[RMDB]
RNA sequence: GGGAACGACUCGAGUAGAGUCGAAAAGAUAUGGAGCCUUGGAAACUGGCACCGAAGAACUCGGAAACGAGGGAGGUGGCAGUGGAGGCUCCUAAGUCAAAGAGUACGAGCUUCGGCUCGUACUCAAGUAAUUUCUAACGUUCGCGUUAGAAAUUACAAAAGAAACAACAACAACAAC
Reactivity to DMS in 0.01 (KOAc 150mM, MgCl2 10mM, bicine 150mM(pH8.5), 24C), signal-to-noise 2, nucleotides 027 to 126: g000a030u000a300u000g000g000a020g020c000c000u010u010g020g030a110a180a040c000u000g000g000c000a020c000c000g020a110a160g010a140a200c000u000c010g000g000a170a100a180c020g000a010g010g000g020a090g010g020u000g000g000c000a000g000u000g000g000a010g000g020c030u000c000c010u010a000a060g020u000c040a130a110a150g010a010g010u000a010c000g000a000g010c000u000u010c240g010g020c000u000c000g000u000a000c000u000c000a000a060
Reactivity to 2A3 in 0.01 (KOAc 150mM, MgCl2 10mM, bicine 150mM(pH8.5), 24C), signal-to-noise 1, nucleotides 027 to 126: g030a020u120a040u190g000g000a000g000c010c020u120u140g300g180a220a200a040c000u020g160g000c000a000c010c000g110a160a110g000a030a020c010u000c020g000g020a110a050a030c030g000a020g000g010g050a020g010g000u050g070g060c000a000g000u000g010g050a010g000g000c000u000c000c000u000a010a020g050u010c020a150a020a060g000a000g030u000a000c000g000a000g000c000u010u170c300g020g000c010u020c000g020u000a010c000u010c000a000a010